[RMDB]
RNA sequence: GGGAACGACUCGAGUAGAGUCGAAAAAAAUUCUGGAACUAAUUAUAUAGAGGAUAUGUCUCAAUUUGUUCUGCAUUAAUGCCACAGUGGGGAUGGAGGCCAGGCCGUGGCCAGAGCAGAUACGUAGGUCCCAAUUUAGUUUCGACUAAAUUGGGACAAAAGAAACAACAACAACAAC
Reactivity to 2A3 in 0.01 (KOAc 150mM, MgCl2 10mM, bicine 150mM(pH8.5), 24C), signal-to-noise 2, nucleotides 027 to 126: a000a000a010u100u010c020u020g010g020a030a020c010u040a020a100u300u030a170u120a170u090a180g060a000g030g010a000u020a080u190g100u060c000u000c010a030a010u100u080u010g010u000u000c010u000g000c000a090u000u130a110a040u180g000c010c000a000c000a030g000u010g040g000g020g000a040u070g080g080a060g020g160c030c000a080g000g040c020c000g020u030g010g000c080c020a000g000a010g040c010a000g030a000u080a160c060g020u060a050g000
Reactivity to DMS in 0.01 (KOAc 150mM, MgCl2 10mM, bicine 150mM(pH8.5), 24C), signal-to-noise 1, nucleotides 027 to 126: a070a020a060u020u000c000u010g000g010a150a250c030u000a080a020u020u100a080u050a200u020a100g000a030g030g000a040u020a090u030g000u030c000u000c060a050a040u040u030u000g000u030u000c000u000g000c090a140u000u000a060a060u020g030c040c020a050c020a020g020u000g000g000g000g070a050u000g000g000a050g020g000c000c040a010g040g000c020c020g000u010g020g000c000c090a140g000a030g010c000a040g000a030u050a030c040g030u080a090g000
Description: Chemical mapping of a 177-nucleotide RNA with 2A3 and DMS. High DMS reactivity at an A or C suggests that its Watson-Crick edge is free.